[RMDB]
RNA sequence: GGGAACGACUCGAGUAGAGUCGAAAAUUACCGCCCAGGAUGGGGUGCAGCGUUACUGCAAUAUCCAGGGCACCUAGGUGCAGCCUUGUAGUUUUAGUGGACUUUAGGCUAAAGAAUUUCACUAGCAAAAAUCUUUAAGGGUUCGCCCUUAAAGAAACUGAUUCUCAAUGUUCGCAUUGAGAAUCAGAAAAGAAACAACAACAACAAC
Reactivity to 2A3 in 0.01 (KOAc 150mM, MgCl2 10mM, bicine 150mM(pH8.5), 24C), signal-to-noise 2, nucleotides 027 to 156: u040u010a030c020c000g020c000c020c000a010g000g000a000u020g050g050g030g130u040g020c000a010g000c060g190u120u230a110c010u000g000c010a010a020u030a020u060c000c000a000g000g000g000c000a010c010c020u060a090g110g000u090g060c030a000g000c020c000u080u030g100u090a030g000u000u000u120u020a050g000u020g050g010a010c000u100u050u000a020g040g020c040u140a150a100a010g050a040a040u090u130u180c010a010c050u050a020g020c070a020a130a170a110a180u050c000u030u020u010a010a010g060g000g050u050u070c230g110c000c000c010u000u010a000a020a000g000a000a010a030
The record gives the reactivity of an RNA of 207 nucleotides to 2A3.
Conditions: 150 mM KOAc, 10 mM MgCl2 and 150 mM bicine (pH 8.5), 24 C.
It was measured as part of the RMDB library M2RFPK.
For 2A3 the reverse transcriptase was SuperScript II with manganese.